Overview
Structure probing data (DMS) for a 177-nucleotide construct. Reactivities are given for positions 27 through 126.

[RMDB]
RNA sequence: GGGAACGACUCGAGUAGAGUCGAAAAGAUAUGGAGGAUGGGGAGACGGGGUGUCGGAAACGACAUGCACGUCGAGGAUCCCGCUCCUCCUAAGUCAAAUCUCUAGGGGGUUCGCCCCCUAGAGAAACUAAACGAUGCAGUUCGCUGCAUCGUUUAGAAAAGAAACAACAACAACAAC
Reactivity to DMS in 0.01 (KOAc 150mM, MgCl2 10mM, bicine 150mM(pH8.5), 24C), signal-to-noise 2, nucleotides 027 to 126: g000a020u000a240u010g000g000a010g000g020a040u020g000g000g010g000a070g050a020c010g010g010g020g070u000g010u000c000g010g010a090a080a160c000g020a010c000a000u010g040c040a080c020g000u000c050g010a130g010g000a210u000c000c000c060g000c160u000c000c000u000c000c000u000a000a110g000u000c010a110a140a170u000c000u000c000u010a000g000g000g000g000g060u000u010c300g000c040c000c010c000c010u000a000g000a000g010a000a030a080

It was measured as part of the RMDB library TTRDEL.